[RMDB]
RNA sequence: GGGAACGACUCGAGUAGAGUCGAAAAGACUAAAGCAUUUGGACCCUGCAGCUAUUUAUAAACAGCACUUUACAGUGCUUUCAGUCUGAAUAUUGGGACUCCCCUAGAAAGGACAGAUUCAGUCCUUUCUGAAAGGAGGAUAGACGAAGGGUGAGGAAAAAUCCCUAAUGUUCGCAUUAGGGAUUUUAAAAGAAACAACAACAACAAC
Reactivity to 2A3 in 0.01 (KOAc 150mM, MgCl2 10mM, bicine 150mM(pH8.5), 24C), signal-to-noise 1, nucleotides 027 to 156: g000a000c000u040a020a000a010g040c010a070u070u130u300g020g020a050c000c000c060u030g030c040a030g000c010u070a090u130u280u060a210u140a070a050a010c020a020g000c030a000c030u010u110u270a040c080a000g000u000g010c000u010u020u010c000a000g000u000c030u040g040a030a060u060a130u150u140g030g010g020a020c000u000c000c000c000c000u010a010g010a000a010a000g000g020a000c000a010g210a080u240u110c060a010g010u000c000c000u000u000u020c000u000g020a040a040a000g010g000a000g000g000a010u050a020g070a010c070g010a020a030g030g030g000u100g040a110g040g000a040
Reactivity to DMS in 0.01 (KOAc 150mM, MgCl2 10mM, bicine 150mM(pH8.5), 24C), signal-to-noise 2, nucleotides 027 to 156: g000a110c030u010a010a020a050g030c030a060u000u000u020g020g000a100c060c050c030u010g040c020a130g010c020u000a070u010u010u010a120u020a110a040a100c080a070g030c000a080c040u000u000u000a120c090a080g040u000g010c000u000u000u000c080a090g000u000c000u000g020a120a120u000a120u010u000g000g030g000a130c000u010c010c000c020c130u010a040g010a020a020a060g010g000a030c000a130g010a170u010u010c190a160g000u000c000c000u000u000u000c010u010g010a020a060a080g010g000a040g000g000a080u000a060g010a090c080g030a080a040g030g030g030u010g010a070g040g010a020